Structure probing data (2A3) for a 207-nucleotide construct. The RNA was probed in 150 mM KOAc, 10 mM MgCl2 and 150 mM bicine (pH 8.5) at 24 C. The 2A3 profile rests on 563 reads. Reactivities are rounded to 0.1 and cut off at 0 and 3.
RNA sequence: GGGAACGACUCGAGUAGAGUCGAAAAACUAGGUCAUAACUCAAGCAAAAAUACAAGUGUUGGCUAUCCACCAAAACACCAGUACACAAGGAAUGCCACUUUUUAAUUUCUAUACUUUGGAGAACUAGGGACAUUUUCCACUGGUUUAUGAGUAGGAGCUACUAGGAGGAUUCGUCCUCCUAGUAGCAAAAGAAACAACAACAACAAC
Reactivity to 2A3 in 0.01 (KOAc 150mM, MgCl2 10mM, bicine 150mM(pH8.5), 24C), signal-to-noise 2, nucleotides 027 to 156: a010c030u120a080g030g000u100c070a120u060a160a040c020u040c120a070a040g010c070a100a150a050a110a000u180a030c070a100a080g000u020g020u110u020g080g000c020u100a030u010c040c000a040c020c000a000a000a040a070c050a010c010c010a000g080u120a010c100a020c050a160a020g050g000a020a040u040g020c000c040a140c100u050u070u020u090u120a180a130u070u050u010c010u010a120u050a240c050u100u170u230g020g020a110g020a070a030c050u050a030g020g000g040a030c050a080u100u160u120u020c020c020a060c040u000g040g030u000u050u000a050u090g010a020g070u080a150g010g010a020